[RMDB]
RNA sequence: GGGAACGACUCGAGUAGAGUCGAAAAUGCCAUUCAGGCGCUACAAGAAGAGGGUAUCAAGAUUCCUCAAGAGAUAUCCAUUAUCGGUUUUAAUGAUAUUAGCGUUGCGCAAUAUGUAACGCCUGCCCCUGCAGGACAAUUUCGAUUGUCCUGCAGGAAAAGAAACAACAACAACAAC
Reactivity to 2A3 in 0.01 (KOAc 150mM, MgCl2 10mM, bicine 150mM(pH8.5), 24C), signal-to-noise 2, nucleotides 027 to 126: u110g000c060c000a020u150u100c030a010g000g000c000g000c010u000a000c000a030a030g130a050a030g050a070g030g020g030u030a030u110c100a090a020g030a250u130u070c020c000u110c030a050a030g070a030g010a020u020a020u060c110c040a050u000u060a040u060c060g040g130u110u130u030u250a060a050u060g060a040u030a010u100u060a060g020c070g150u250u170g060c100g020c020a040a020u160a070u190g010u010a010a000c010g020c000c000u020g010c020c000
Reactivity to DMS in 0.01 (KOAc 150mM, MgCl2 10mM, bicine 150mM(pH8.5), 24C), signal-to-noise 2, nucleotides 027 to 126: u020g010c050c050a190u020u010c010a040g030g010c000g010c010u000a000c020a040a090g000a190a200g010a070g030g000g020u010a120u000c180a130a190g020a280u000u010c000c050u000c050a070a050g010a220g000a030u000a000u000c100c050a090u000u000a000u000c160g020g040u020u020u000u000a070a090u000g000a020u000a020u010u000a140g000c020g010u010u010g020c100g000c030a070a130u020a080u000g010u000a000a020c000g000c000c010u000g020c300c070
Chemical mapping of a 177-nucleotide RNA with 2A3 and DMS.
The data come from the RNA Mapping Database (RMDB), library OK2TST.
The DMS profile rests on 1,041 reads.
The reactions ran in a buffer of 150 mM KOAc, 10 mM MgCl2 and 150 mM bicine (pH 8.5), at 24 C.
DMS adducts were read by reverse transcription with MarathonRT.
Reactivities are given for positions 27 through 126.